Background:
This 177-nucleotide RNA was probed chemically with 2A3 and DMS. For DMS, 1,078 sequencing reads were counted. Conditions: 150 mM KOAc, 10 mM MgCl2 and 150 mM bicine (pH 8.5), 24 C.
RNA sequence: GGGAACGACUCGAGUAGAGUCGAAAACAUGCAGAUGCUGUACACCCUGUCAGGGUCUAAAGUAUCUCUGACAACACUGGCGAAACAUUCGGCGAAUCCAUAGGGGCAUUUCAAUUUAUUUAGCGCAUGAUGAGUGCACUUUCGAGUGCACUCAUCAAAAAGAAACAACAACAACAAC
Reactivity to 2A3 in 0.01 (KOAc 150mM, MgCl2 10mM, bicine 150mM(pH8.5), 24C), signal-to-noise 2, nucleotides 027 to 126: c040a040u210g020c010a000g050a090u050g070c020u010g000u010a030c010a040c080c010c010u000g100u110c010a020g000g010g000u000c050u130a100a060a030g080u140a100u010c080u000c000u030g010a030c000a110a000c040a000c030u060g030g000c050g030a100a140a020c050a030u110u100c030g060g000c030g030a010a020u010c020c020a030u070a110g020g000g000g000c020a000u000u000u080c040a090a100u000u040u070a150u070u140u090a220g020c090g040c100a100
Reactivity to DMS in 0.01 (KOAc 150mM, MgCl2 10mM, bicine 150mM(pH8.5), 24C), signal-to-noise 1, nucleotides 027 to 126: c090a050u000g020c040a020g000a020u000g000c090u000g020u040a170c300a090c000c000c010u000g060u000c100a040g030g000g000u000c050u000a050a150a100g050u030a040u000c020u030c000u010g000a080c020a200a150c100a100c100u010g000g040c000g010a170a170a160c050a100u000u000c050g000g000c050g000a060a020u000c060c010a100u040a050g030g000g040g000c070a010u000u040u000c050a070a130u110u020u070a000u040u070u000a120g000c050g000c090a100

The data come from the RNA Mapping Database (RMDB), library OK1LIB.
DMS adducts were read by reverse transcription with MarathonRT.
Reactivities are given for positions 27 through 126.